[RMDB]
RNA sequence: GGGAACGACUCGAGUAGAGUCGAAAAUGUUCACUGUAAGUGGGAGCCACUGAAGACUUUGGGCAUGGAAGAGACCUGAGCAGAGUCACAUUUAAGAAUUCCUUUCUGCUGGGUGAUGGUGGUGUACACUCAGCCAUGUAUUCGUACAUGGCUGAGUAAAAGAAACAACAACAACAAC
Reactivity to DMS in 0.01 (KOAc 150mM, MgCl2 10mM, bicine 150mM(pH8.5), 24C), signal-to-noise 3, nucleotides 027 to 126: u020g010u000u000c060a050c070u010g010u010a050a060g030u020g000g000g010a180g000c020c010a030c040u010g010a100a080g000a060c030u000u000u010g000g020g010c040a060u010g010g010a110a070g010a140g000a060c040c040u000g010a050g020c020a040g000a010g010u000c060a030c120a040u000u000u000a080a150g020a090a120u000u000c040c030u000u010u000c040u010g030c030u000g000g010g020u000g000a130u000g010g020u010g000g010u000g000u010a120c160
Reactivity to 2A3 in 0.01 (KOAc 150mM, MgCl2 10mM, bicine 150mM(pH8.5), 24C), signal-to-noise 1, nucleotides 027 to 126: u070g040u000u040c030a000c050u050g040u170a120a020g060u080g050g020g090a040g060c010c000a020c010u060g070a080a040g030a090c000u090u070u110g050g070g030c050a040u120g030g060a070a030g050a020g010a000c000c050u100g060a020g000c010a000g000a040g010u110c020a010c040a140u110u120u030a140a120g130a130a140u070u060c040c000u010u090u030c030u050g040c000u010g010g000g040u040g030a060u080g000g040u030g020g060u070g050u030a020c050